[RMDB]
RNA sequence: GGGAACGACUCGAGUAGAGUCGAAAAAUUGAGGGAUAAUACAGGCUCUCCCAUCCAACUCCUAUUCCAACACGUCCUCGUCGUACAGAGUGGUAACAUGUGUCACCACAUAUCCAAGCUUGGGUACAAUCCCGUUACGUUUCGACGUAACGGGAUUAAAAGAAACAACAACAACAAC
Reactivity to 2A3 in 0.01 (KOAc 150mM, MgCl2 10mM, bicine 150mM(pH8.5), 24C), signal-to-noise 5, nucleotides 027 to 126: a000u160u190g020a050g020g030g030a030u080a110a070u120a240c070a050g080g040c010u010c010u000c020c000c000a020u040c020c000a030a040c040u000c020c010u010a040u120u010c030c020a040a020c040a010c030g040u030c010c010u040c020g070u030c010g020u050a050c030a040g050a030g060u030g030g020u080a050a020c030a060u190g130u090g020u110c050a010c020c020a020c020a040u050a030u070c020c020a040a030g050c070u060u040g060g010g020u020a050c040
Reactivity to DMS in 0.01 (KOAc 150mM, MgCl2 10mM, bicine 150mM(pH8.5), 24C), signal-to-noise 3, nucleotides 027 to 126: a090u000u010g020a110g000g000g010a040u040a080a060u040a090c190a150g000g000c030u000c030u000c040c010c020a090u000c060c050a070a090c090u000c010c000u030a140u000u000c040c050a040a120c130a100c060g000u000c020c020u000c030g010u020c040g000u010a070c150a120g000a030g000u050g000g010u010a030a060c080a100u040g030u020g000u000c020a060c090c000a020c050a080u030a030u040c020c050a030a150g020c030u010u000g020g000g010u000a090c190